An RNA of 177 nucleotides, treated with 2A3 and DMS and read out base by base. For DMS, 1,668 sequencing reads were counted. It was measured as part of the RMDB library OK2TRN. The 2A3 profile rests on 1,789 reads. For DMS the reverse transcriptase was MarathonRT.

[RMDB]
RNA sequence: GGGAACGACUCGAGUAGAGUCGAAAAAGCAGGAUCAUACUGUCAAAGAAGGCACCAUGGAUGACAUCAAGAUCAGCACCUCAGGACCGUGUAGAAGGCUUAGCUACAAAGGAUACUUUCUCCUCGCGCCGUAGCUAAAAUUCGUUUUAGCUACGGCAAAAGAAACAACAACAACAAC
Reactivity to 2A3 in 0.01 (KOAc 150mM, MgCl2 10mM, bicine 150mM(pH8.5), 24C), signal-to-noise 2, nucleotides 027 to 126: a000g030c060a020g050g080a040u070c010a040u150a160c000u040g010u070c020a010a050a120g110a050a100g070g010c030a010c070c000a060u070g060g000a070u020g050a010c000a060u060c040a040a010g040a080u030c010a000g020c020a000c000c010u040c030a010g030g030a110c010c020g060u050g020u080a040g040a070a030g050g000c040u030u070a030g020c010u010a040c070a100a070a010g040g010a020u040a140c030u050u090u000c010u000c040c000u050c010g000c030
Reactivity to DMS in 0.01 (KOAc 150mM, MgCl2 10mM, bicine 150mM(pH8.5), 24C), signal-to-noise 2, nucleotides 027 to 126: a080g000c050a070g000g000a140u000c100a090u010a110c120u010g000u010c070a060a080a120g010a100a150g010g050c050a070c030c020a030u010g010g020a120u000g010a050c090a060u010c100a030a070g010a040u000c080a100g010c040a060c060c040u000c090a070g000g000a100c110c030g010u000g030u000a060g000a110a050g000g000c060u000u000a030g010c030u010a000c090a060a040a040g000g010a070u000a060c140u000u010u000c030u000c030c050u010c070g000c300